[RMDB]
RNA sequence: GGGAACGACUCGAGUAGAGUCGAAAAGAUCUCGAUGCUGUUGGUCUCUUGGGUGACCAGGGUGUCGGGUCCGGCCUGGCCCUCGACGACCACGCUGACUUCGACGACGACCUUCUCGCCACGGCGCCACCGACUUUAUGUUCGCAUAAAGUCGGUGAAAAGAAACAACAACAACAAC
Reactivity to DMS in 0.01 (KOAc 150mM, MgCl2 10mM, bicine 150mM(pH8.5), 24C), signal-to-noise 3, nucleotides 027 to 126: g000a070u000c010u000c010g010a050u000g020c000u000g020u000u010g020g000u000c010u000c070u000u000g030g000g030u010g000a080c020c000a040g010g010g020u000g010u010c020g000g040g000u010c030c050g020g000c020c030u000g010g000c020c010c020u000c090g030a080c140g000a050c030c040a080c120g010c040u000g010a090c070u000u000c030g010a070c100g000a070c080g000a060c050c040u000u000c030u010c050g010c030c030a070c080g010g000c070g030c130
Reactivity to 2A3 in 0.01 (KOAc 150mM, MgCl2 10mM, bicine 150mM(pH8.5), 24C), signal-to-noise 3, nucleotides 027 to 126: g070a110u040c040u040c050g030a050u020g020c040u080g000u300u050g010g000u000c000u010c060u090u110g260g010g000u090g060a070c000c010a000g040g000g040u080g060u030c020g020g000g060u000c040c000g030g050c010c010u020g000g000c010c000c000u050c040g080a100c080g010a000c000c020a010c020g040c020u030g080a150c000u030u060c060g040a040c050g020a010c020g020a040c000c000u030u040c040u020c030g020c000c030a090c100g040g000c020g050c020

Notes:
Structure probing data (DMS and 2A3) for a 177-nucleotide construct. It was measured as part of the RMDB library OK2TST. The reactions ran in a buffer of 150 mM KOAc, 10 mM MgCl2 and 150 mM bicine (pH 8.5), at 24 C. As a SHAPE reagent, 2A3 marks flexible, mostly unpaired nucleotides at the ribose 2'-OH.